Source information: Source: RMDB library TTRDEL, as collected in RNAgym. This 177-nucleotide RNA was probed chemically with 2A3 and DMS.
RNA sequence: GGGAACGACUCGAGUAGAGUCGAAAAGAUAUGGACUACCAGCUGUUGACGCAGCUCGGAAACGAGGCUGCGAUGGGCUGUGUAGUCCUAAGUCAAAGCUCCCUUCUCGUUCGCGAGAAGGGAGCAACUUUGUACUCUCCUUCGGGAGAGUACAAAGAAAAGAAACAACAACAACAAC
Reactivity to 2A3 in 0.01 (KOAc 150mM, MgCl2 10mM, bicine 150mM(pH8.5), 24C), signal-to-noise 2, nucleotides 027 to 126: g020a000u030a020u050g000g000a010c010u000a000c000c000a010g000c010u170g060u300u300g070a040c010g060c000a000g000c000u010c020g010g030a000a000a030c010g000a010g300g170c010u050g020c020g040a090u140g280g060g000c010u010g070u090g000u100a000g000u010c000c000u000a010a000g000u000c020a000a090a030g000c000u000c000c020c030u010u000c000u010c010g070u060u100c300g010c020g130a000g020a020a010g000g000g000a000g000c000a010a010
Reactivity to DMS in 0.01 (KOAc 150mM, MgCl2 10mM, bicine 150mM(pH8.5), 24C), signal-to-noise 1, nucleotides 027 to 126: g000a020u000a020u010g000g010a010c000u000a000c000c000a010g020c000u000g010u000u000g020a170c010g000c000a010g000c000u000c000g000g000a010a010a050c000g010a030g030g020c000u000g020c000g010a090u000g050g000g000c000u000g020u030g020u000a010g010u010c000c000u000a000a080g000u000c010a110a130a180g000c000u000c000c010c000u000u000c000u000c000g010u010u010c210g030c010g000a020g010a010a000g000g000g000a000g000c000a000a020
2A3 adducts were read by reverse transcription with SuperScript II with manganese. Conditions: 150 mM KOAc, 10 mM MgCl2 and 150 mM bicine (pH 8.5), 24 C. Values cover nucleotides 27 to 126. The 2A3 profile rests on 3,321 reads.